[RMDB]
RNA sequence: GGGAACGACUCGAGUAGAGUCGAAAAGCAACGCAAAGCCGCGGCAAGUGGAGUUAGCGAGAAGAGACUAGGCUUUGGUUUCUUCAAGUGAAGCGGUCACCAAUCAGGUGUGGUAGUUACCGUAAAGAUAACCGCUCUUUGUUCGCAAAGAGCGGAACCUGUAUCUGACGUUCGCGUCAGAUACAGGAAAAGAAACAACAACAACAAC
Reactivity to 2A3 in 0.01 (KOAc 150mM, MgCl2 10mM, bicine 150mM(pH8.5), 24C), signal-to-noise 2, nucleotides 027 to 156: g020c020a040a000c050g030c100a060a050a020g030c030c020g010c030g060g050c050a090a040g050u090g110g040a100g030u170u150a020g030c060g010a020g010a050a000g010a000g000a010c030u060a060g060g150c020u130u140u090g000g010u010u020u000c000u000u000c030a050a000g040u040g040a070a000g000c000g000g020u030c000a020c030c010a030a110u150c070a090g000g120u050g030u020g110g020u030a040g040u080u060a040c020c000g070u050a120a030a010g030a040u110a120a060c000c000g020c020u010c000u000u010u000g050u050u090c190g010c080a000a010a000g010a000g000c000g010g000a000a000
Reactivity to DMS in 0.01 (KOAc 150mM, MgCl2 10mM, bicine 150mM(pH8.5), 24C), signal-to-noise 1, nucleotides 027 to 156: g050c020a010a060c020g000c000a130a100a180g010c010c050g040c100g030g010c060a080a070g020u000g010g000a200g010u000u000a210g010c030g000a230g040a000a030g020a080g020a010c010u000a070g010g000c110u000u000u010g030g000u000u000u000c010u010u000c060a080a300g000u000g010a110a160g000c040g000g010u010c010a100c030c000a040a100u000c110a110g010g030u000g000u040g000g010u000a130g010u000u000a030c010c030g060u010a060a080a070g000a090u000a010a120c000c000g010c010u000c020u000u000u000g010u000u000c270g060c000a010a000a010g000a000g050c000g000g020a010a000
Annotation
An RNA of 207 nucleotides, treated with 2A3 and DMS and read out base by base. In probing experiments dimethyl sulfate is read out at A N1 and C N3, which are open when not base-paired. It was measured as part of the RMDB library M2RFPK. 2A3 adducts were read by reverse transcription with SuperScript II with manganese. The reactions ran in a buffer of 150 mM KOAc, 10 mM MgCl2 and 150 mM bicine (pH 8.5), at 24 C.